[RMDB]
RNA sequence: GGGAACGACUCGAGUAGAGUCGAAAAAAAAAAAGAUAUGGAUCCGUGAACUACGCUCCCGAGCGAGGUCCUCGGAAACGAGGACUACCCACCGCUUAGGGAGCGCACGGAUCCUAAGUCAAAAAAACAGUAUAGCUAAGUUCGCUUAGCUAUACUGAAAAGAAACAACAACAACAAC
Reactivity to DMS in 0.01 (KOAc 150mM, MgCl2 10mM, bicine 150mM(pH8.5), 24C), signal-to-noise 3, nucleotides 027 to 126: a000a000a020a100a050a210a080g000a030u000a300u000g010g000a020u000c000c000g010u000g010a110a070c190u010a300c060g020c010u000c000c000c000g000a020g000c020g000a070g040g000u000c000c000u010c000g000g000a060a050a110c000g010a000g010g020a020c000u000a020c040c050c030a300c070c020g000c000u000u000a060g040g010g000a000g000c010g010c000a000c040g000g000a020u000c000c010u000a000a020g030u010c030a000a010a030a030a060a080a140
Reactivity to 2A3 in 0.01 (KOAc 150mM, MgCl2 10mM, bicine 150mM(pH8.5), 24C), signal-to-noise 2, nucleotides 027 to 126: a030a020a000a000a000a000a040g090a060u150a050u170g010g000a000u000c000c020g010u000g020a090a100c130u180a060c300g010c000u000c000c010c000g010a000g000c000g020a020g000g020u020c010c000u000c000g040g000a080a020a020c000g000a000g000g040a010c000u010a020c010c020c020a050c030c010g000c010u030u050a110g000g020g000a000g000c000g000c010a000c010g010g000a000u020c000c010u000a010a000g000u010c030a020a090a010a000a070a060a120
Structure probing data (DMS and 2A3) for a 177-nucleotide construct. For 2A3, 5,537 sequencing reads were counted. DMS adducts were read by reverse transcription with MarathonRT. For 2A3 the reverse transcriptase was SuperScript II with manganese. It was measured as part of the RMDB library TTRDES. For DMS, 3,390 sequencing reads were counted.